This 177-nucleotide RNA was probed chemically with DMS and 2A3. DMS adducts were read by reverse transcription with MarathonRT. The reactions ran in a buffer of 150 mM KOAc, 10 mM MgCl2 and 150 mM bicine (pH 8.5), at 24 C. For 2A3, 4,075 sequencing reads were counted. Reactivities are given for positions 27 through 126. 2A3 is a SHAPE reagent: it acylates the 2'-hydroxyl of flexible nucleotides of all four kinds. High DMS reactivity at an A or C suggests that its Watson-Crick edge is free. It was measured as part of the RMDB library OK2TRN.

RNA sequence: GGGAACGACUCGAGUAGAGUCGAAAAGUUGGUUUCCUGGUACGACAACGAGUGGGGGUACUCCAACAGACUGGUCGACCUGGCCAUCCACAUGUCAAAGAAGGACGGUAACUUCUGAACCGAGAGACCUAGAUGAACUUUUCGAAGUUCAUCUAGGAAAAGAAACAACAACAACAAC
Reactivity to DMS in 0.01 (KOAc 150mM, MgCl2 10mM, bicine 150mM(pH8.5), 24C), signal-to-noise 5, nucleotides 027 to 126: g020u000u000g020g010u000u000u000c010c010u000g000g030u000a100c100g000a050c050a070a070c090g010a150g000u000g000g010g010g010g020u000a070c090u010c020c020a060a070c050a080g020a130c210u000g000g020u000c040g000a060c040c030u000g000g020c040c030a060u000c020c010a040c080a100u000g000u000c060a090a100a090g010a050a060g000g010a090c050g000g000u010a080a100c050u000u010c040u000g010a080a150c060c040g000a100g000a190g000a170
Reactivity to 2A3 in 0.01 (KOAc 150mM, MgCl2 10mM, bicine 150mM(pH8.5), 24C), signal-to-noise 4, nucleotides 027 to 126: g040u050u030g000g100u030u070u060c010c000u030g020g020u070a090c030g020a020c030a120a010c070g100a090g050u050g000g050g000g000g050u070a180c030u000c060c000a010a050c010a020g120a060c070u060g000g040u050c010g020a100c010c030u030g020g000c030c010a040u020c020c010a020c010a110u130g040u070c050a120a060a060g070a030a020g070g030a020c060g020g090u080a070a060c040u040u040c060u130g060a040a040c030c050g050a060g000a000g020a160